[RMDB]
RNA sequence: GGGAACGACUCGAGUAGAGUCGAAAAUCAACUCCAUCAGGCCCCUCUUCGCCAACAAGCCCACCUUCCUCGUCAUCAACAAGAUCGACGUCGUCCGUCUCUCCCAGCUCGACGGCGAGCGAGCAAAACGCCUAAACCAAUUCGUUGGUUUAGGCGUAAAAGAAACAACAACAACAAC
Reactivity to DMS in 0.01 (KOAc 150mM, MgCl2 10mM, bicine 150mM(pH8.5), 24C), signal-to-noise 2, nucleotides 027 to 126: u010c120a160a120c140u000c020c000a090u000c130a140g020g010c100c000c000c070u010c070u000u000c060g000c010c010a060a070c160a130a100g010c000c020c010a100c100c020u010u000c040c000u000c040g000u000c000a060u010c070a090a070c150a140a050g000a030u000c040g010a030c050g000u000c040g000u000c030c030g000u010c020u000c080u000c020c000c000a200g010c030u010c010g030a080c050g010g010c050g000a100g000c000g020a010g000c050a110a040a080